[RMDB]
RNA sequence: GGGAACGACUCGAGUAGAGUCGAAAAGGAUUUGCAUUUUACUGGCACUAAUGGUGUUGGUGAGGUGGGUCGUGGUAUUGCUCUGACACUAUUCAAUCUUGCUGAUACGCUUCUUGGUGGCUUACCGCCAGCUAAUAGUCUUCGGACUAUUAGCUGGAAAAGAAACAACAACAACAAC
Reactivity to 2A3 in 0.01 (KOAc 150mM, MgCl2 10mM, bicine 150mM(pH8.5), 24C), signal-to-noise 3, nucleotides 027 to 126: g060g010a070u070u070u200g090c030a030u030u030u020u170a060c060u020g020g030c000a000c050u130a120a170u290g070g010u040g000u050u040g020g020u040g010a040g000g040u030g040g030g030u020c040g030u060g040g000u080a070u060u110g030c020u000c040u070g030a010c000a010c070u070a060u080u090c020a010a110u010c020u050u080g030c030u020g020a050u020a060c060g000c060u020u030c010u050u070g020g010u000g030g010c020u040u050a050c010c030g020
Reactivity to DMS in 0.01 (KOAc 150mM, MgCl2 10mM, bicine 150mM(pH8.5), 24C), signal-to-noise 4, nucleotides 027 to 126: g010g010a110u000u020u000g010c040a050u000u010u010u000a050c070u010g010g010c020a030c040u020a090a120u010g010g030u010g020u000u000g020g040u000g010a070g020g030u010g000g010g010u010c050g030u000g000g000u000a050u010u010g010c060u010c040u010g000a090c100a050c090u010a070u010u010c080a040a070u000c050u000u000g020c050u000g010a090u000a080c140g000c070u000u000c060u010u000g000g010u000g000g000c060u000u010a120c070c080g010

Conditions: 150 mM KOAc, 10 mM MgCl2 and 150 mM bicine (pH 8.5), 24 C. This 177-nucleotide RNA was probed chemically with 2A3 and DMS. For DMS, 4,928 sequencing reads were counted. It was measured as part of the RMDB library OK2TRN. For 2A3 the reverse transcriptase was SuperScript II with manganese.